[RMDB]
RNA sequence: GGGAACGACUCGAGUAGAGUCGAAAAGUUACUGUUGCUGCCUAUACCACCAAGGGGGAUGGUGCCCGCAGCAAGCCCAAAAUUGUCACUACAACAGGUGCAGGUGAGUGAGGGGUCAGGACGGACCUGAGGGUGGGGCAGCAGGAGGGCAGCGCCACUAACCCGUAUUCUUCGGAAUACGGGUUAGAAAAGAAACAACAACAACAAC
Reactivity to 2A3 in 0.01 (KOAc 150mM, MgCl2 10mM, bicine 150mM(pH8.5), 24C), signal-to-noise 2, nucleotides 027 to 156: g030u070u110a110c090u110g020u150u000g000c000u000g000c010c050u120a110u030a180c010c030a010c010c040a140a110g060g050g000g000g000a040u000g000g070u040g130c030c040c000g000c010a000g000c010a070a020g000c040c000c000a090a080a030a070u120u040g050u070c060a000c060u180a050c050a240a070c050a100g010g020u040g080c020a090g020g060u060g010a060g060u070g020a030g000g010g000g000u060c020a110g060g040a040c080g010g060a060c000c040u010g030a060g000g000g080u050g000g020g050g010c100a120g030c030a010g040g010a060g000g000g000c010a040g030c060g000c040c000a000